RNA sequence: GGGAACGACUCGAGUAGAGUCGAAAAGUCCGUCGACCUCGCUCCCGAGGCCAGGCUGAUCAGGACGACGGCCAGAGCCGCUACGGCGCGCCGCACUGACAUUGCUGCGACCCGUGGCACCAUCAGUCGUGGUACGGAGAACUCCACGCUGGGAAACCUGAAAGACAGAUUUCGAUCUGUCUUUCAGAAAAGAAACAACAACAACAAC
Reactivity to DMS in 0.01 (KOAc 150mM, MgCl2 10mM, bicine 150mM(pH8.5), 24C), signal-to-noise 1, nucleotides 027 to 156: g020u000c020c010g030u010c010g010a020c030c020u000c010g030c100u000c060c080c000g000a090g020g030c000c020a180g040g000c020u000g000a080u010c030a100g020g010a240c000g020a060c000g020g080c000c050a160g000a090g030c030c030g030c010u000a040c060g030g010c100g000c100g030c020c000g000c000a120c080u000g020a140c210a270u020u010g040c000u000g010c020g010a070c020c000c000g010u010g050g000c030a120c070c030a120u010c020a080g010u000c100g080u000g000g050u010a210c020g000g010a190g000a090a190c070u000c010c000a030c070g010c030u040g000g010g010a080a120a140c140
Reactivity to 2A3 in 0.01 (KOAc 150mM, MgCl2 10mM, bicine 150mM(pH8.5), 24C), signal-to-noise 4, nucleotides 027 to 156: g020u000c010c000g000u010c020g050a090c000c020u050c030g010c040u050c050c030c040g030a130g010g000c040c010a020g010g010c020u080g020a150u080c080a050g050g040a030c040g000a010c020g050g020c030c020a070g030a050g130c070c120g000c010u020a010c020g010g000c040g010c010g000c120c040g020c000a020c040u120g070a050c030a110u060u120g000c020u000g010c000g050a300c010c000c000g010u000g000g000c010a040c030c020a050u120c010a030g140u250c000g030u010g010g000u040a070c090g100g050a090g030a080a010c010u000c000c010a000c000g000c020u040g050g020g000a020a070a050c010
The record gives the reactivity of an RNA of 207 nucleotides to DMS and 2A3.
2A3 is a SHAPE reagent: it acylates the 2'-hydroxyl of flexible nucleotides of all four kinds.
The data come from the RNA Mapping Database (RMDB), library OK3TST.
The RNA was probed in 150 mM KOAc, 10 mM MgCl2 and 150 mM bicine (pH 8.5) at 24 C.
Values cover nucleotides 27 to 156.
For 2A3, 3,594 sequencing reads were counted.